Overview
Conditions: 150 mM KOAc, 10 mM MgCl2 and 150 mM bicine (pH 8.5), 24 C. Structure probing data (DMS) for a 177-nucleotide construct. The data come from the RNA Mapping Database (RMDB), library M2PK90.

RNA sequence: GGGAACGACUCGAGUAGAGUCGAAAAUUAAAGGAGGAGGAGGAGUGUGUGUCUUCCCAGCUGCUGAGUAGAACCUCCGCACACACGCGAUAGCUACGAGCAGCAGCAGUGCGGAAACGGUGAAAAACAUAGGAGUCCUGUUCGCAGGACUCCUAUGAAAAGAAACAACAACAACAAC
Reactivity to DMS in 0.01 (KOAc 150mM, MgCl2 10mM, bicine 150mM(pH8.5), 24C), signal-to-noise 3, nucleotides 027 to 126: u000u010a080a100a100g010g010a070g030g020a070g000g010a080g000g000a070g010u000g020u000g010u000g000u000c110u000u010c000c010c010a160g010c050u000g000c010u000g010a140g000u010a050g000a120a130c090c030u000c090c010g000c050a050c120a070c240a130c170g020c050g000a090u000a110g010c020u000a050c080g010a110g000c060a040g000c020a070g000c050a090g020u010g020c080g010g000a050a050a040c120g000g020u000g000a050a080a070a080a130